Chemical mapping of a 177-nucleotide RNA with DMS and 2A3. 2A3 adducts were read by reverse transcription with SuperScript II with manganese. Reactivities are given for positions 27 through 126. The reactions ran in a buffer of 150 mM KOAc, 10 mM MgCl2 and 150 mM bicine (pH 8.5), at 24 C.
RNA sequence: GGGAACGACUCGAGUAGAGUCGAAAAGCGGCCAUCGGCUUCUCGGAUCAGCUGCGUAUUACCCAGAUCUUCAUGGAUGAUCUAAACAUUGUCAAGACGUACAACUUUCCGCACUGCAACGCGGUGACGGGGUAUUUAGGUUCGCCUAAAUACCCCGAAAAGAAACAACAACAACAAC
Reactivity to DMS in 0.01 (KOAc 150mM, MgCl2 10mM, bicine 150mM(pH8.5), 24C), signal-to-noise 3, nucleotides 027 to 126: g030c060g000g040c030c190a040u000c060g000g030c140u010u000c030u000c040g030g000a030u000c150a090g000c040u010g010c010g000u000a120u010u000a110c020c020c000a070g010a020u020c050u010u000c040a110u000g010g010a050u010g000a050u000c040u020a080a080a080c110a090u000u010g000u020c050a060a090g000a070c120g000u000a050c150a030a060c140u000u000u000c030c020g000c020a100c070u000g010c130a080a140c160g010c020g000g000u000g000a100
Reactivity to 2A3 in 0.01 (KOAc 150mM, MgCl2 10mM, bicine 150mM(pH8.5), 24C), signal-to-noise 3, nucleotides 027 to 126: g000c010g030g030c020c020a080u050c000g090g010c110u230u100c140u110c110g100g000a060u040c050a030g040c010u050g040c000g010u040a130u070u180a110c000c000c010a020g030a040u040c030u190u050c060a170u100g210g000a020u050g040a030u030c030u060a020a070a040c060a150u100u190g070u170c050a040a110g120a130c030g060u110a070c100a060a060c070u090u160u090c010c000g060c030a020c030u190g040c030a120a110c100g010c010g050g000u000g010a010